[RMDB]
RNA sequence: GGGAACGACUCGAGUAGAGUCGAAAAGCAAAAUACACAGAAGGUGGAAAUGCCAUAUUAGAGAACAUUUCCUUCUCAAUAAGUCCUGGCCAGAGGGUGGGCCUCUUGGGAAGAACUGGAUCAGGGAACUUAGAUCACCUUUCGAGGUGAUCUAAGUAAAAGAAACAACAACAACAAC
Reactivity to 2A3 in 0.01 (KOAc 150mM, MgCl2 10mM, bicine 150mM(pH8.5), 24C), signal-to-noise 2, nucleotides 027 to 126: g030c000a050a080a030a000u170a060c100a000c020a100g300a300a040g150g030u060g020g000a000a020a000u030g000c010c010a090u100a150u140u280a090g070a030g030a180a010c010a030u060u050u000c010c000u100u030c050u020c040a050a120u090a120a020g050u070c000c010u030g000g050c010c000a000g030a050g120g020g100u150g000g000g030c020c030u090c090u100u090g040g010g040a040a130g040a040a030c030u020g000g050a140u030c000a000g030g000g000a010
Reactivity to DMS in 0.01 (KOAc 150mM, MgCl2 10mM, bicine 150mM(pH8.5), 24C), signal-to-noise 2, nucleotides 027 to 126: g010c050a040a060a030a070u010a100c130a070c110a100g030a090a130g020g030u000g030g000a080a080a080u010g000c010c080a150u010a150u000u000a170g000a110g000a030a090c080a080u000u010u000c040c000u000u010c010u010c030a070a120u000a050a100g000u000c000c000u000g020g040c000c030a050g010a240g040g000g020u000g010g010g050c050c060u000c080u010u000g010g020g010a100a040g000a080a130c030u000g000g000a040u000c000a030g000g020g010a160